Background: This 177-nucleotide RNA was probed chemically with 2A3. For 2A3 the reverse transcriptase was SuperScript II with manganese. It was measured as part of the RMDB library RFM100. The reactions ran in a buffer of 150 mM KOAc, 10 mM MgCl2 and 150 mM bicine (pH 8.5), at 24 C.
[RMDB]
RNA sequence: GGGAACGACUCGAGUAGAGUCGAAAAGAAAGAAAGAAAGAAGCCUGAGGGGCUCACAGCUCUGGUCCUUGGAGCUCCAGAGAAAAUGUUGCUCCGGGGCUGAGUUCUGUGCACCCCCCUUGCCCAAAUCUUCGUACACGUUCGCGUGUACGAAGAUAAAAGAAACAACAACAACAAC
Reactivity to 2A3 in 0.01 (KOAc 150mM, MgCl2 10mM, bicine 150mM(pH8.5), 24C), signal-to-noise 1, nucleotides 027 to 126: g050a050a070a000g030a020a110a010g010a010a120a020g070a010a000g030c010c050u070g070a110g000g010g010g030c030u030c010a000c000a000g010c000u020c030u090g060g020u030c000c000u120u300g040g000a000g020c000u060c060c000a010g120a010g080a160a180a000a190u010g000u000u030g030c000u000c000c000g010g000g000g020c000u000g000a010g010u180u080c010u020g010u000g000c010a000c000c000c000c000c000c010u060u000g020c000c000c060a070a230